[RMDB]
RNA sequence: GGGAACGACUCGAGUAGAGUCGAAAAGAGUACAUAUGCCCAGCCUUACUGUCUCGGCUGGAUGCUUCGUGCAAAUGCUAUGUACGCCUACGUAUAUGUGCGUAGAUGCCUAUAUUUUCUCUCCUGAGAAAAUAUAGAUGCAUACAAAGGGAAUGCAAUCACUCCAGGUAUUCGUACCUGGAGUGAUAAAAGAAACAACAACAACAAC
Reactivity to DMS in 0.01 (KOAc 150mM, MgCl2 10mM, bicine 150mM(pH8.5), 24C), signal-to-noise 1, nucleotides 027 to 156: g000a140g040u010a030c000a050u000a020u000g010c010c000c050a060g000c020c010u000u000a100c090u000g000u000c070u000c140g020g000c020u000g000g000a130u000g000c030u000u000c180g000u000g030c040a040a100a170u000g040c010u000a040u000g020u000a020c010g010c040c010u000a010c000g030u000a120u000a070u020g020u000g000c030g000u000a030g010a120u000g010c010c000u000a010u000a000u000u000u000u000c000u010c000u000c250c300u000g020a040g020a010a010a000a000u000a000u010a020g010a100u030g010c020a010u000a040c080a030a040a090g020g010g020a100a080u000g000c030a200
Reactivity to 2A3 in 0.01 (KOAc 150mM, MgCl2 10mM, bicine 150mM(pH8.5), 24C), signal-to-noise 3, nucleotides 027 to 156: g080a030g010u000a020c000a000u040a030u230g000c020c000c010a010g000c010c010u190u240a200c120u300g150u220c090u060c160g000g000c000u000g000g000a040u050g010c010u060u160c150g190u150g050c000a070a090a050u180g000c010u020a000u010g010u010a010c010g020c010c000u010a010c000g050u030a060u020a060u300g150u100g040c000g000u010a010g010a150u030g000c010c000u000a000u000a000u000u020u010u000c000u000c010u090c060c190u200g000a000g000a000a000a000a000u000a010u000a000g010a030u080g000c000a010u010a090c040a050a120a000g110g030g010a090a030u080g030c050a000

Background
Chemical mapping of a 207-nucleotide RNA with DMS and 2A3. DMS adducts were read by reverse transcription with MarathonRT. For 2A3, 1,602 sequencing reads were counted.